This 170-nucleotide RNA was probed chemically with DMS and 2A3. The reactions ran in a buffer of 150 mM KOAc, 10 mM MgCl2 and 150 mM bicine (pH 8.5), at 24 C.

RNA sequence: GGGAACGACUCGAGUAGAGUCGAAAACCGAAGGUCCCGAGUGAGGCUUAUCCCGGGGAUCGGCCUCUGUCCCUCCAUGGUGAGCUCCAGGACCCCCAAAAGGAGGGGGGUGGGCCUUGGACCUCCAGACCCAAGCACUUCGGUGCUUGGAAAAGAAACAACAACAACAAC
Reactivity to DMS in 0.01 (KOAc 150mM, MgCl2 10mM, bicine 150mM(pH8.5), 24C), signal-to-noise 5, nucleotides 027 to 129: c050c020g050a040a060g040g010u040c050c030c040g060a120g040u000g020a070g040g020c000u000u050a070u040c080c020c170g090g000g000g030a040u020c080g050g000c010c020u040c070u020g050u040c010c010c020u050c040c020a060u040g020g040u040g030a000g020c070u050c020c000a030g050g010a020c020c010c030c010c010a040a080a100a120g040g020a080g090g030g020g030g030g030u050g040g000g020c050c040u000u000g020g020a120c050c020u030c010c050a060g030a120c130
Reactivity to 2A3 in 0.01 (KOAc 150mM, MgCl2 10mM, bicine 150mM(pH8.5), 24C), signal-to-noise 6, nucleotides 027 to 129: c010c000g060a010a030g040g000u040c000c000c010g010a060g070u130g020a000g010g020c020u040u030a020u100c050c050c060g120g060g030g000a020u040c040g000g000c010c000u020c010u040g070u080c000c000c000u000c000c010a050u040g030g000u060g000a070g020c030u050c050c000a040g020g080a090c010c000c000c000c000a050a180a050a050g100g030a050g000g000g010g000g010g010u140g040g060g010c000c000u000u020g010g020a010c000c010u020c020c010a040g010a080c000
For 2A3, 14,374 sequencing reads were counted. 2A3 adducts were read by reverse transcription with SuperScript II with manganese. For DMS, 15,314 sequencing reads were counted.